[RMDB]
RNA sequence: GGGAACGACUCGAGUAGAGUCGAAAAUCCUAAGUCUCAGGGAAGGUGGAACGCAUUGGCAAGAAUUCGGAAACGAAUUUGAUGACCCAAUGAACUACGUUUGUUACAGCCCUGAGAUAUGGAAAAACUCCUUUGGAACUUCGGUUCCAAAGGAGAACUACCUUCCCAUCUUCGGAUGGGAAGGUAGAAAAGAAACAACAACAACAAC
Reactivity to 2A3 in 0.01 (KOAc 150mM, MgCl2 10mM, bicine 150mM(pH8.5), 24C), signal-to-noise 2, nucleotides 027 to 156: u000c010c000u030a120a020g010u000c000u000c000a010g000g010g100a070a090g170g080u200g060g040a000a000c000g000c050a010u000u000g020g070c060a170a130g030a010a010u010u010c030g000g080a060a050a070c000g010a010a030u010u000u040g220a250u060g010a030c030c020c000a000a000u000g010a070a050c100u140a030c200g040u090u040u060g140u130u080a040c060a040g040c000c000c000u000g000a000g000a000u000a010u020g000g010a010a130a040a010a060c000u020c000c000u000u010u010g010g000a020a000c000u020u110c260g120g000u020u000c010c030a010a000a010g010g020a000g000a000a000